RNA sequence: GGGAACGACUCGAGUAGAGUCGAAAAGAGCUGAAGUACAGCAAGAACGACGGAAUCCUUGGCAAAGCGUCGAAGAUAAGCGUGCCGAAUGCCAAGGAUUAACGGCACGCGAGGCGAAGACGCCAGAAAUAGUAAUCAGCUUCGGCUGAUUACUAUUAAAAGAAACAACAACAACAAC
Reactivity to 2A3 in 0.01 (KOAc 150mM, MgCl2 10mM, bicine 150mM(pH8.5), 24C), signal-to-noise 6, nucleotides 027 to 126: g130a020g000c010u010g040a150a050g150u180a150c010a000g010c020a020a040g040a080a040c050g060a010c030g030g090a070a030u020c000c000u010u010g010g000c030a070a070a080g100c050g040u060c060g080a070a010g060a090u180a120a020g010c010g000u000g000c010c020g050a130a070u100g010c000c000a000a000g000g000a000u010u010a000a000c010g000g000c000a000c010g000c010g010a050g000g020c040g060a100a040g080a090c040g010c000c000a040g040a050
Reactivity to DMS in 0.01 (KOAc 150mM, MgCl2 10mM, bicine 150mM(pH8.5), 24C), signal-to-noise 6, nucleotides 027 to 126: g000a120g010c000u000g010a150a110g030u020a190c030a030g030c020a110a110g010a110a120c060g000a060c060g000g030a090a050u000c000c000u020u020g000g020c000a090a130a120g010c070g020u010c020g020a130a180g000a100u030a080a120g000c000g010u010g000c000c000g010a140a100u030g000c000c000a010a040g000g020a020u010u020a000a110c060g010g000c000a010c020g000c010g010a030g000g010c000g000a170a150g000a100c040g010c010c120a130g000a050